[RMDB]
RNA sequence: GGGAACGACUCGAGUAGAGUCGAAAAUUUCAAGGAGACUAGAAAAGAGACUUCUCAGCCACUUCGCCAGCUAUUGGUCCUUCUAUUCAUUAGUGUUUGCUGAGACAUGCUAUGUGACAGGACUGAGAUCAUUAGCCCAAUUCGUUGGGCUAAUGAUAAAAGAAACAACAACAACAAC
Reactivity to DMS in 0.01 (KOAc 150mM, MgCl2 10mM, bicine 150mM(pH8.5), 24C), signal-to-noise 4, nucleotides 027 to 126: u000u010u010c030a120a110g010g000a130g010a110c040u000a120g010a050a040a090a100g000a120g010a090c080u000u000c030u000c030a050g010c020c040a090c070u000u000c070g010c050c130a100g000c080u000a070u010u010g000g020u000c020c030u010u000c060u000a090u010u000c060a080u010u000a060g020u000g010u000u000u000g020c030u010g010a100g000a080c110a040u000g020c060u000a040u010g010u000g000a050c210a040g000g000a040c020u000g010a070g000
Reactivity to 2A3 in 0.01 (KOAc 150mM, MgCl2 10mM, bicine 150mM(pH8.5), 24C), signal-to-noise 3, nucleotides 027 to 126: u020u000u030c030a060a000g050g020a080g060a050c060u100a060g130a070a120a020a030g100a050g010a070c040u030u010c010u020c040a010g040c010c010a110c070u070u050c020g040c020c010a040g040c030u080a030u150u110g020g010u000c000c010u060u060c030u070a110u050u080c020a000u060u110a030g040u040g030u130u150u090g040c050u060g050a020g020a140c000a010u080g000c000u060a040u120g030u000g020a030c040a040g000g000a010c020u030g040a000g010
Structure probing data (DMS and 2A3) for a 177-nucleotide construct.
For 2A3, 2,141 sequencing reads were counted.
The DMS profile rests on 4,433 reads.
Conditions: 150 mM KOAc, 10 mM MgCl2 and 150 mM bicine (pH 8.5), 24 C.